The record gives the reactivity of an RNA of 207 nucleotides to 2A3 and DMS. For DMS the reverse transcriptase was MarathonRT. Source: RMDB library OK3TST, as collected in RNAgym. For 2A3 the reverse transcriptase was SuperScript II with manganese.

RNA sequence: GGGAACGACUCGAGUAGAGUCGAAAAUAUACAAGAGGGUAAAUAUGUUAGUAUCAAACAGCAAACUAUUGACUAUUCAACUUACUCAGAGAGGUACUUUAUCAUCAUUGAAGCAAUCAGUGUUAUCAAUCACUUACCCUAUGAGGAUGAUGUAAAGCGAGUAGUUGCAAUUCGUUGCAACUACUCGAAAAGAAACAACAACAACAAC
Reactivity to 2A3 in 0.01 (KOAc 150mM, MgCl2 10mM, bicine 150mM(pH8.5), 24C), signal-to-noise 3, nucleotides 027 to 156: u070a000u000a010c020a020a080g070a080g100g000g010u050a060a060a040u180a150u120g010u080u030a030g030u030a050u150c070a040a090a050c030a020g100c060a130a070a070c050u100a080u120u080g030a040c040u040a080u060u080c010a050a020c040u080u060a040c010u020c050a010g030a000g000a010g100g060u020a020c000u120u110u040a070u100c040a000u000c000a010u030u110g020a040a010g060c040a050a040u090c010a040g030u020g040u130u070a180u130c060a090a010u020c010a030c040u040u050a040c000c000c000u040a110u090g010a020g090g010a010u020g000a000u030g050u090a030a030a030g050
Reactivity to DMS in 0.01 (KOAc 150mM, MgCl2 10mM, bicine 150mM(pH8.5), 24C), signal-to-noise 1, nucleotides 027 to 156: u030a110u000a170c010a130a140g010a190g020g040g030u000a000a100a070u000a140u000g010u010u000a080g020u000a050u000c050a080a190a120c080a200g040c080a080a050a170c060u000a020u000u000g020a040c040u000a060u000u000c020a090a010c000u000u020a110c040u000c020a100g020a100g000a160g000g000u040a040c050u000u000u020a080u000c030a010u000c050a150u010u010g020a060a050g000c120a060a110u000c100a050g020u000g010u000u000a020u000c060a010a130u000c000a060c020u000u000a040c000c000c010u000a100u000g010a050g000g000a100u000g020a050u000g020u020a030a060a170g000